[RMDB]
An RNA of 207 nucleotides, treated with 2A3 and DMS and read out base by base.
RNA sequence: GGGAACGACUCGAGUAGAGUCGAAAAGCGGGGCUUGAAACGCGGGUAGCGCGCACGCCCGGCUAAGAAGUUCGCAUACGCGGUGUGCUGGUGCCGAAGUGUCUGCUGCAACGGCACGCUCGACACCUAGAACAUACCGUAUUCGUACGGUAUGUAACAUCUGUCUUCCUUUCGAGGAAGACAGAUGAAAAGAAACAACAACAACAAC
Reactivity to 2A3 in 0.01 (KOAc 150mM, MgCl2 10mM, bicine 150mM(pH8.5), 24C), signal-to-noise 2, nucleotides 027 to 156: g030c040g000g000g000g000c030u060u020g080a130a180a100c050g020c030g000g080g090u300a050g140c040g000c010g030c020a030c030g000c000c000c000g010g000c000u000a040a040g070a050a000g050u050u070c110g000c130a020u030a100c080g010c090g090g020u030g000u020g060c030u080g000g000u020g010c010c050g070a060a040g030u060g030u080c070u130g080c030u060g010c060a000a040c020g030g000c010a000c010g000c060u030c010g020a020c020a000c010c000u040a040g070a070a010c000a000u000a010c000c000g000u000a010u030u190c230g060u030a000c030g000g000u000a000u000g000u000a050a040
Reactivity to DMS in 0.01 (KOAc 150mM, MgCl2 10mM, bicine 150mM(pH8.5), 24C), signal-to-noise 1, nucleotides 027 to 156: g020c000g030g010g050g040c060u010u040g020a150a120a040c020g010c020g060g020g060u010a150g010c020g010c070g030c000a200c220g000c000c000c040g010g030c000u010a050a130g000a140a240g010u020u000c040g110c030a170u000a090c030g010c130g000g060u000g040u000g030c020u000g020g010u010g000c000c000g000a070a190g000u010g010u000c090u030g050c110u000g020c100a190a110c090g010g080c010a050c080g000c140u000c020g010a070c030a050c000c000u030a090g000a030a050c010a030u000a000c010c010g020u000a050u000u000c250g130u000a050c000g020g020u010a010u010g010u000a070a210

About this RNA:
For DMS the reverse transcriptase was MarathonRT. The 2A3 profile rests on 909 reads. It was measured as part of the RMDB library M2RFOK.